[RMDB]
RNA sequence: GGGAACGACUCGAGUAGAGUCGAAAAAAACCGGUGGGUCCGGUCGCGGGACUCAUCGGGACAUCAAACAGCGACUGGGAUCGUCAUCCUGACUUGUUCGCGUGAUCAGGAGAUCCGAGUAGAGACAUAGCGAACUGCGCACGGAGAAGCCUUGAGGGUUACAAAAGGUGUUCGCACCUUUUGUAACAAAAGAAACAACAACAACAAC
Reactivity to 2A3 in 0.01 (KOAc 150mM, MgCl2 10mM, bicine 150mM(pH8.5), 24C), signal-to-noise 1, nucleotides 027 to 156: a000a000a000c000c000g000g000u000g000g010g010u000c000c000g010g000u010c000g010c000g000g010g000a000c000u000c000a000u020c010g000g020g020a010c020a080u260c110a080a000a040c000a010g000c000g010a000c020u020g000g000g000a000u000c000g000u010c000a000u000c010c000u010g000a000c000u100u170g000u000u010c000g000c010g000u010g010a060u000c000a000g010g000a000g010a000u000c000c000g000a000g000u300a010g020a010g000a050c050a240u220a000g010c000g000a000a000c010u020g040c030g010c000a030c080g060g030a060g030a120a080g000c030c030u090u080g070a090g060g130